[RMDB]
RNA sequence: GGGAACGACUCGAGUAGAGUCGAAAAGGUUAAAUAUAACUGACAAAUCAAACAAUAAUUUCGCAGUAGCUGCGUAAUAGCCACUGCAUCGCCUAACAGCAUCUCCUACGUGCUGUUAACGCGAUUCAACCCUAGUAGGAUAUGCUAAACACUGCCGGUCAUGUGAGAACUUCGGUUCUCACAUGACAAAAGAAACAACAACAACAAC
Reactivity to 2A3 in 0.01 (KOAc 150mM, MgCl2 10mM, bicine 150mM(pH8.5), 24C), signal-to-noise 3, nucleotides 027 to 156: g030g010u050u040a010a220a030u210a120u070a080a070c020u070g080a020c090a040a170a060u210c090a030a060a150c100a030a090u240a250a130u140u240u230c090g000c000a000g030u060a000g000c050u080g040c070g110u090a070a040u130a170g020c000c000a000c000u010g010c010a010u000c000g000c010c020u000a000a000c000a000g000c000a000u010c010u030c030c020u020a000c000g000u000g000c000u000g000u000u000a010a020c000g000c000g030a040u170u200c060a040a090c010c000c050u020a000g010u010a000g000g000a000u010a010u050g000c030u040a030a060a040c070a050c090u090g000c020c040g080